[RMDB]
RNA sequence: GGGAACGACUCGAGUAGAGUCGAAAAUCGGCUUCGGCCGACUGACGACCUUUGUGUUGAAAGAUAUUGUCAGCUUUGAGUGACCCAUUGGGUCACAAGAUGAGAGCUUGGAUUUAUAUCUUUCUAACACUCUGGUACACUAGGGUUUCGACCCUAAGAGCCGUUAAUUCUUCGGAAUUAACGGCUCAAAAGAAACAACAACAACAAC
Reactivity to 2A3 in 0.01 (KOAc 150mM, MgCl2 10mM, bicine 150mM(pH8.5), 24C), signal-to-noise 1, nucleotides 027 to 156: u000c000g010g020c000u070u020c210g100g030c000c040g000a010c040u050g050a000c070g030a000c000c000u030u000u030g010u010g000u010u000g010a000a000a000g000a000u000a000u010u040g000u020c010a000g000c000u040u020u040g020a000g000u000g010a000c000c020c140a300u120u300g040g000g000u000c010a010c000a010a010g200a070u300g070a030g000a010g070c070u230u300g120g010a020u070u300u130a010u070a000u000c000u000u000u010c070u010a030a000c000a010c010u020c010u010g000g000u070a090c000a010c040u110a070g020g000g000u070u100u180c130g130a030c000c060c000u040a030a090

Structure probing data (2A3) for a 207-nucleotide construct. For 2A3 the reverse transcriptase was SuperScript II with manganese. As a SHAPE reagent, 2A3 marks flexible, mostly unpaired nucleotides at the ribose 2'-OH. Reactivities are given for positions 27 through 156. The RNA was probed in 150 mM KOAc, 10 mM MgCl2 and 150 mM bicine (pH 8.5) at 24 C. Source: RMDB library RNAMAK, as collected in RNAgym. The 2A3 profile rests on 538 reads.